Structure probing data (DMS and 2A3) for a 207-nucleotide construct. Reactivities are given for positions 27 through 156. The RNA was probed in 150 mM KOAc, 10 mM MgCl2 and 150 mM bicine (pH 8.5) at 24 C.
[RMDB]
RNA sequence: GGGAACGACUCGAGUAGAGUCGAAAACAGUCUCUGGUGGUAGGAGAAUAUGUCACCAAGAAAGAAAAGGAAAAUCAUGCUUCCUUGCUGAAUUUGGUGAAUUCUGCAAAACAAGAAUGACAGUGAAAGGGAGGAGACAAAGCAGUCUGAAUCAUGCCCCCAUAGCGUUAUUCGUAACGCUAUGGGGAAAAGAAACAACAACAACAAC
Reactivity to DMS in 0.01 (KOAc 150mM, MgCl2 10mM, bicine 150mM(pH8.5), 24C), signal-to-noise 1, nucleotides 027 to 156: c030a040g030u020c020u000c000u000g000g040u010g030g010u020a060g010g030a120g000a080a110u010a060u020g050u040c020a000c000c010a040a110g000a100a190a110g010a050a060a000a060g010g020a030a050a120a100u000c060a120u000g000c200u020u010c030c050u010u000g000c090u000g040a010a150u000u000u000g020g050u010g000a100a070u000u000c040u000g000c010a040a010a100a040c010a040a060g030a030a070u010g000a060c060a020g000u010g010a060a050a060g020g000g000a110g010g000a120g000a070c020a060a080a140g000c070a080g010u000c040u000g040a090a030u000c080a080u000g000c070
Reactivity to 2A3 in 0.01 (KOAc 150mM, MgCl2 10mM, bicine 150mM(pH8.5), 24C), signal-to-noise 4, nucleotides 027 to 156: c050a020g100u010c010u010c010u060g040g020u020g040g060u090a070g060g000a050g030a110a020u170a090u150g080u010c000a010c010c020a020a000g040a010a050a000g040a010a260a020a000g020g020a030a050a020a100u180c130a100u170g070c060u030u000c000c000u010u010g010c000u010g030a130a120u020u000u020g010g010u020g020a000a010u030u050c020u020g030c040a030a030a070a070c010a060a040g050a070a050u080g030a030c030a060g030u050g110a070a070a030g040g010g010a030g030g020a060g010a020c060a040a040a040g030c030a000g020u030c030u060g060a060a070u120c050a050u160g020c000